[RMDB]
RNA sequence: GGGAACGACUCGAGUAGAGUCGAAAAAUGGGGCUGUAGCAAUCUUAUUUAGGAUGAAAGUCUGAUUGGCCCUUAUUAGGAUGAUUAACCUUUCUGAAAUUAAGAGCCACCCCUGAAUUAGUCUGUCUCAAAAACACUAGUUCGCUAGUGUUUUUGAAAAAGAAACAACAACAACAAC
Reactivity to DMS in 0.01 (KOAc 150mM, MgCl2 10mM, bicine 150mM(pH8.5), 24C), signal-to-noise 6, nucleotides 027 to 126: a070u020g000g000g010g010c300u010g020u040a110g020c040a100a080u010c020u000u000a030u040u000u020a090g020g010a070u010g000a030a030a030g010u020c090u020g010a030u000u000g010g000c080c000c030u000u030a040u010u030a080g000g000a080u000g000a050u010u000a070a120c100c010u010u000u000c010u010g000a150a050a040u010u010a030a020g000a070g010c020c020a050c010c000c000c000u000g000a080a090u010u010a080g010u010c030u000g000u000c120
Reactivity to 2A3 in 0.01 (KOAc 150mM, MgCl2 10mM, bicine 150mM(pH8.5), 24C), signal-to-noise 5, nucleotides 027 to 126: a010u060g000g000g010g020c140u050g020u090a050g030c050a070a080u020c000u020u040a080u080u080u060a090g070g020a030u070g060a060a040a010g020u010c050u040g020a070u020u090g050g000c000c000c000u010u010a100u050u150a020g010g000a010u060g010a020u030u080a060a100c030c000u030u030u010c010u010g020a040a050a060u060u030a020a040g010a000g040c000c010a010c010c000c010c000u020g040a070a090u060u040a070g040u010c030u030g070u040c010

About this RNA
The record gives the reactivity of an RNA of 177 nucleotides to DMS and 2A3. Values cover nucleotides 27 to 126. The data come from the RNA Mapping Database (RMDB), libraries RFM100 and RFMREP. For DMS the reverse transcriptase was MarathonRT. 2A3 adducts were read by reverse transcription with SuperScript II with manganese. Conditions: 150 mM KOAc, 10 mM MgCl2 and 150 mM bicine (pH 8.5), 24 C.